This 177-nucleotide RNA was probed chemically with DMS. For DMS, 8,057 sequencing reads were counted.

[RMDB]
RNA sequence: GGGAACGACUCGAGUAGAGUCGAAAAAUGCACUGGUUCGCCAGUGCAUGAUUACCGAGAAAGUACCUCGGUAUAAAAGUGGAACCCUUGGAAACAAGGGAAUUCCGAACCGAUUCGUCGGUUCGAAUUCCCGUGACGAAUUCGUUCGUCACGGGAAAAAAGAAACAACAACAACAAC
Reactivity to DMS in 0.01 (KOAc 150mM, MgCl2 10mM, bicine 150mM(pH8.5), 24C), signal-to-noise 5, nucleotides 027 to 126: a010u000g000c000a010c010u000g000g010u000u020c240g020c000c000a000g000u000g010c000a000u000g010a100u010u010a010c000c000g000a020g000a160a140a120g000u010a140c140c000u000c000g000g000u000a010u000a040a060a090a090g010u000g000g000a040a090c000c000c000u000u000g000g000a160a090a150c010a020a010g000g000g010a030a030u000u000c030c010g010a000a000c000c000g010a030u000u010c170g010u000c000g010g000u000u000c000g010a080a160

Background
Conditions: 150 mM KOAc, 10 mM MgCl2 and 150 mM bicine (pH 8.5), 24 C. It was measured as part of the RMDB library M2PK50.